The record gives the reactivity of an RNA of 177 nucleotides to 2A3 and DMS. Conditions: 150 mM KOAc, 10 mM MgCl2 and 150 mM bicine (pH 8.5), 24 C. For DMS the reverse transcriptase was MarathonRT.
[RMDB]
RNA sequence: GGGAACGACUCGAGUAGAGUCGAAAAUAUUUCGCGCCAUUGUAGCUCAGUGCUAGAGCGCUUCACUCGUAUAAAAAUACUGCCAUGAAGAGGUCCGCGGUUCAAUCCCGCGUGGUGCCAAAAAAAAGUAAUAAAUGGCUUUCGAGCCAUUUAUUACAAAAGAAACAACAACAACAAC
Reactivity to 2A3 in 0.01 (KOAc 150mM, MgCl2 10mM, bicine 150mM(pH8.5), 24C), signal-to-noise 1, nucleotides 027 to 126: u150a060u040u130u090c030g000c000g010c040c010a030u090u180g080u010a010g010c010u020c090a020g040u050g130c060u100a030g010a010g080c000g020c000u010u000c040a010c040u060c030g000u040a020u020a120a300a120a090a020u040a060c030u060g060c020c020a050u090g020a020a030g000a000g040g020u090c030c000g010c010g000g050u100u000c010a010a040u030c010c020c000g000c000g000u000g060g000u060g060c010c000a210a000a000a000a000a000a000a050
Reactivity to DMS in 0.01 (KOAc 150mM, MgCl2 10mM, bicine 150mM(pH8.5), 24C), signal-to-noise 2, nucleotides 027 to 126: u000a140u000u010u000c150g020c020g010c020c020a080u000u010g010u000a070g030c030u000c090a080g020u000g010c080u000a010g010a070g020c030g010c010u000u000c050a020c040u020c190g020u010a050u000a020a100a170a150a130u000a070c040u000g000c120c100a120u010g010a010a020g000a090g010g020u000c040c010g010c010g010g040u000u010c160a080a300u020c190c010c000g000c020g020u000g000g000u000g010c010c020a010a000a010a020a020a070a040a110